An RNA of 177 nucleotides, treated with DMS and 2A3 and read out base by base. It was measured as part of the RMDB library 15KREP. For DMS the reverse transcriptase was MarathonRT.
RNA sequence: GGGAACGACUCGAGUAGAGUCGAAAACCUGAUACUGUUGAAGUCCCACCGCAAGUGGUGAAACUUCCGUCUGCACCUCAGACUAUCCAGCCCGAGGUAAAAGAAGUUGCACCUGUCUAUGAGGCUGCUAACUAUAGGUCUUCGGACCUAUAGUUAGAAAAGAAACAACAACAACAAC
Reactivity to DMS in 0.01 (KOAc 150mM, MgCl2 10mM, bicine 150mM(pH8.5), 24C), signal-to-noise 3, nucleotides 027 to 126: c000c010u010g000a090u000a050c140u010g000u010u000g010a090a090g000u000c030c000c020a080c070c150g020c100a090a120g020u000g010g040u000g000a040a020a020c020u000u000c010c070g000u000c160u000g020c260a050c030c020u000c020a050g000a020c030u000a110u010c250c190a040g030c030c010c010g030a040g000g000u000a040a070a140a090g000a020a040g020u000u000g000c020a020c010c000u010g000u000c030u000a100u000g000a080g000g010c120u000g000
Reactivity to 2A3 in 0.01 (KOAc 150mM, MgCl2 10mM, bicine 150mM(pH8.5), 24C), signal-to-noise 1, nucleotides 027 to 126: c000c000u000g030a080u080a220c060u070g160u180u070g030a050a000g010u010c010c000c000a030c030c010g050c050a100a080g040u040g020g000u070g000a090a000a010c000u000u030c000c030g060u010c050u060g040c050a050c040c000u070c040a000g010a020c020u050a080u070c040c060a010g050c010c000c000g040a000g040g040u050a090a000a000a000g050a020a000g000u060u080g030c030a000c010c000u050g020u080c030u000a150u110g050a060g060g000c010u040g010

Record summary: The RNA was probed in 150 mM KOAc, 10 mM MgCl2 and 150 mM bicine (pH 8.5) at 24 C.